This 177-nucleotide RNA was probed chemically with DMS and 2A3.
[RMDB]
RNA sequence: GGGAACGACUCGAGUAGAGUCGAAAAUGGGGCACACGCGGGCUGCUUGUUCUACUUCACGUGCGGUGGUGAAGCGAUAUCGUGCCAUGGUGGCUGGAGUGCUCAGCGCUGCGAGGGGGUUGCCCUCCCUAUUUAUCUUAUUCGUAAGAUAAAUAGGAAAAGAAACAACAACAACAAC
Reactivity to DMS in 0.01 (KOAc 150mM, MgCl2 10mM, bicine 150mM(pH8.5), 24C), signal-to-noise 9, nucleotides 027 to 126: u010g010g010g000g020c020a040c130a110c060g010c040g010g010g000c030u010g010c080u000u010g010u000u000c030u010a060c020u000u000c020a030c090g020u000g020c030g010g030u000g000g010u000g010a080a080g020c190g010a170u010a070u010c060g020u000g010c020c010a050u000g000g040u000g010g010c080u000g000g010a050g010u000g010c030u000c030a040g010c020g010c020u000g010c040g010a110g010g010g000g010g010u010u000g010c010c010c010u000c130
Reactivity to 2A3 in 0.01 (KOAc 150mM, MgCl2 10mM, bicine 150mM(pH8.5), 24C), signal-to-noise 7, nucleotides 027 to 126: u080g010g010g010g030c020a020c010a010c080g030c030g020g050g020c060u080g010c020u100u120g030u030u030c040u100a040c010u010u030c010a020c070g100u140g030c030g040g020u030g010g040u090g080a110a010g020c020g040a050u070a060u300c070g050u130g010c020c010a020u060g140g010u040g040g010c090u010g010g010a030g020u030g000c000u010c030a010g010c090g010c040u050g010c010g010a080g040g090g020g010g010u090u030g020c000c000c000u020c010
Values cover nucleotides 27 to 126. Conditions: 150 mM KOAc, 10 mM MgCl2 and 150 mM bicine (pH 8.5), 24 C. 2A3 adducts were read by reverse transcription with SuperScript II with manganese.